An RNA of 177 nucleotides, treated with 2A3 and DMS and read out base by base. The reactions ran in a buffer of 150 mM KOAc, 10 mM MgCl2 and 150 mM bicine (pH 8.5), at 24 C. The 2A3 profile rests on 3,801 reads. 2A3 adducts were read by reverse transcription with SuperScript II with manganese. It was measured as part of the RMDB library TTRDEL. For DMS the reverse transcriptase was MarathonRT.
[RMDB]
RNA sequence: GGGAACGACUCGAGUAGAGUCGAAAAGAUAUGGACUCUUCGUCACAUCGACGAAGUCGGAAACGACAGAGAUGAGACGAGAGAGUCCUAAGUCAAAUCUCGUCUGACGUUCGCGUCAGACGAGAAAGAUCUUAGAAGCGUUCGCGCUUCUAAGAUCAAAAGAAACAACAACAACAAC
Reactivity to 2A3 in 0.01 (KOAc 150mM, MgCl2 10mM, bicine 150mM(pH8.5), 24C), signal-to-noise 2, nucleotides 027 to 126: g000a010u100a050u190g000g000a010c000u000c000u030u020c000g010u000c010a020c010a080u030c010g300a300c030g100a240a080g010u000c010g040g000a060a060a010c010g000a010c010a050g060a000g000a010u010g020a030g000a070c030g020a080g080a020g020a000g220u000c000c000u010a080a010g050u050c020a000a000a200u000c000u000c010g010u020c010u020g030a010c010g000u030u110c300g030c000g200u000c000a010g010a000c000g000a000g000a000a000a000
Reactivity to DMS in 0.01 (KOAc 150mM, MgCl2 10mM, bicine 150mM(pH8.5), 24C), signal-to-noise 2, nucleotides 027 to 126: g000a030u000a300u010g020g000a030c000u000c000u000u000c000g000u000c000a150c010a010u000c020g000a250c260g030a060a100g000u000c000g010g000a080a130a140c030g010a010c030a030g010a140g010a010u010g000a050g010a010c000g000a060g010a020g000a000g010u000c000c010u000a010a070g020u000c030a050a060a170u000c000u000c000g000u000c000u010g010a020c000g030u000u010c250g010c030g010u000c000a000g000a000c000g010a010g000a000a050a100